[RMDB]
RNA sequence: GGGAACGACUCGAGUAGAGUCGAAAAUGGUGACCCACCAAAAGUCUAGUUCCUUCAGCUGGGUGCAGUGGCUCACGCCUGUAAUCUCAGCACUUUUGGAGGCCAAAGUGAGUGGAUCACUUGAGGCCAGGAGUUCAAGACCAGCCUGGCCAACAUAUACUACGAUUAGUUUCGACUAAUCGUAGUAAAAAGAAACAACAACAACAAC
Reactivity to 2A3 in 0.01 (KOAc 150mM, MgCl2 10mM, bicine 150mM(pH8.5), 24C), signal-to-noise 5, nucleotides 027 to 156: u120g020g010u010g000a030c010c010c020a020c000c000a050a040a040a050g100u100c070u160a050g080u180u110c010c000u040u050c030a030g000c000u000g000g020g020u010g000c020a060g040u170g130g000c040u080c110a040c120g040c000c010u010g030u060a160a270u060c030u010c020a020g080c010a050c020u060u120u090u130g010g000a010g020g010c000c030a110a100a020g090u060g090a050g010u050g060g010a050u020c010a020c000u030u090g050a070g030g000c000c000a000g000g020a040g020u170u210c160a150a020g050a120c040c020a030g030c000c010u000g010g000c010c000a000a000c010a010u190a010
Reactivity to DMS in 0.01 (KOAc 150mM, MgCl2 10mM, bicine 150mM(pH8.5), 24C), signal-to-noise 3, nucleotides 027 to 156: u020g010g010u000g010a040c020c030c010a070c000c010a030a120a080a090g000u010c050u000a110g000u000u000c020c020u000u000c050a140g030c010u000g020g050g050u010g010c040a080g010u000g040g010c040u000c190a110c170g040c040c020u000g000u010a040a120u010c010u020c020a010g040c030a080c060u000u000u010u020g010g000a080g020g010c140c040a050a050a080g030u000g010a060g010u000g020g010a100u000c010a010c030u000u010g010a130g010g010c010c000a040g030g020a220g010u000u000c130a100a120g010a140c050c030a130g020c020c030u000g000g000c020c000a040a020c030a080u000a220
Structure probing data (2A3 and DMS) for a 207-nucleotide construct. DMS (dimethyl sulfate) methylates the pairing face of unpaired adenines and cytosines. The reactions ran in a buffer of 150 mM KOAc, 10 mM MgCl2 and 150 mM bicine (pH 8.5), at 24 C. The 2A3 profile rests on 3,503 reads. For DMS the reverse transcriptase was MarathonRT. For 2A3 the reverse transcriptase was SuperScript II with manganese. The DMS profile rests on 6,340 reads.